[RMDB]
RNA sequence: GGGAACGACUCGAGUAGAGUCGAAAAGAUAUGGAUGACCUUAGGGAGCGACAAUGUGAUUGAUGACCUCGCUCGGAAACGAGCGAGCAAGAUCAUGAUCGCAUCGAUCUAAGGUCAUCCUAAGUCAUCUGUACGUAUCGUUCGCGAUACGUACAGAAAAAGAAACAACAACAACAAC
Reactivity to 2A3 in 0.01 (KOAc 150mM, MgCl2 10mM, bicine 150mM(pH8.5), 24C), signal-to-noise 1, nucleotides 027 to 126: g030a000u060a020u130g000g000a000u000g000a000c030c000u020u010a040g060g050g000a090g070c030g000a000c030a060a150u300g000u040g090a020u040u110g200a200u190g090a080c000c020u000c000g000c000u010c020g020g020a050a070a000c000g000a000g000c040g030a000g000c000a050a060g020a040u000c010a030u090g200a120u080c000g000c060a150u300c010g050a060u040c000u000a000a000g010g000u000c000a010u000c000c000u000a000a010g000u000c000a000
Reactivity to DMS in 0.01 (KOAc 150mM, MgCl2 10mM, bicine 150mM(pH8.5), 24C), signal-to-noise 1, nucleotides 027 to 126: g030a020u000a170u000g000g000a000u000g000a040c000c000u000u000a060g000g000g000a020g030c000g000a020c100a180a140u000g000u030g030a010u000u000g010a130u000g020a220c300c010u000c000g040c000u020c000g010g010a080a040a040c000g030a000g030c020g020a010g010c040a010a080g010a050u000c010a010u000g000a200u000c010g050c000a300u000c150g000a090u000c010u010a040a010g020g000u010c050a000u000c000c000u000a010a080g000u000c000a190